[RMDB]
RNA sequence: GGGAACGACUCGAGUAGAGUCGAAAAAGAUUACGAGAAGUGGAAUAAUCACCAGAGAAAGGAAUCAAACGGACCAGUGUUUCGGGUGAUGGGCCAAUUUUUGGGAUACCCACGUUUGAUUGAACGAAAGAACACUGUAGUUCGCUACAGUGUUCUUAAAAGAAACAACAACAACAAC
Reactivity to DMS in 0.01 (KOAc 150mM, MgCl2 10mM, bicine 150mM(pH8.5), 24C), signal-to-noise 5, nucleotides 027 to 126: a120g000a080u000u000a040c060g010a090g000a060a070g030u010g030g000a100a090u000a100a030u000c010a080c000c000a040g010a040g020a020a070a190g010g000a120a050u000c040a050a030a050c070g010g010a060c030c140a140g010u050g000u000u010u000c020g000g010g010u000g000a010u000g010g010g010c010c010a010a100u000u000u000u010u000g020g010g010a080u010a100c030c010c020a080c060g010u010u000u020g000a120u000u020g000a040a060c100g010a090
Reactivity to 2A3 in 0.01 (KOAc 150mM, MgCl2 10mM, bicine 150mM(pH8.5), 24C), signal-to-noise 4, nucleotides 027 to 126: a000g090a070u100u100a050c030g030a000g050a240a030g040u070g000g080a120a080u170a140a000u130c040a040c100c000a020g030a000g030a130a090a020g080g010a000a000u010c000a000a040a030c000g000g050a010c020c070a130g030u080g040u240u100u170c060g030g010g010u090g030a110u080g030g110g070c010c020a030a030u090u050u010u060u030g040g030g000a050u110a120c000c000c020a000c020g020u010u010u020g110a140u020u060g050a090a040c040g050a170